This 177-nucleotide RNA was probed chemically with DMS and 2A3. The DMS profile rests on 1,373 reads.
RNA sequence: GGGAACGACUCGAGUAGAGUCGAAAAGAUAUGGAGGUUUGGAGCUUUGAUCCGUAACAUCCAUCGGAAACGAUGGUGGGGGAGCUCUUAAACCUCCUAAGUCAAAAUCUUGCGUUCGCGCAAGAAACGUCAAACAAGAGUUCGCUCUUGUUUGACGAAAAGAAACAACAACAACAAC
Reactivity to DMS in 0.01 (KOAc 150mM, MgCl2 10mM, bicine 150mM(pH8.5), 24C), signal-to-noise 2, nucleotides 027 to 126: g020a060u010a300u000g000g010a050g010g010u000u000u010g000g010a010g010c020u000u000u030g020a060u000c000c010g010u000a010a080c130a020u000c010c000a000u000c000g010g000a140a090a170c010g000a000u000g000g000u000g000g020g000g060g020a000g020c000u000c000u000u000a010a020a020c010c010u000c000c000u000a020a070g010u010c040a090a050a120a100u000c000u000u000g000c000g020u000u000c300g050c010g040c000a010a010g000a030a070a120
Reactivity to 2A3 in 0.01 (KOAc 150mM, MgCl2 10mM, bicine 150mM(pH8.5), 24C), signal-to-noise 1, nucleotides 027 to 126: g010a010u070a020u150g000g000a000g000g040u020u030u050g050g000a030g000c010u290u260u070g090a020u090c000c010g040u040a030a010c040a300u120c010c000a000u020c000g000g000a060a060a040c000g000a010u010g000g040u000g000g030g000g010g030a010g000c010u100c070u100u270a010a000a000c000c000u000c000c000u010a000a020g000u010c010a000a030a000a140u040c000u020u000g020c000g040u010u060c300g030c010g000c200a000a000g000a090a040a000
The reactions ran in a buffer of 150 mM KOAc, 10 mM MgCl2 and 150 mM bicine (pH 8.5), at 24 C.
The 2A3 profile rests on 2,027 reads.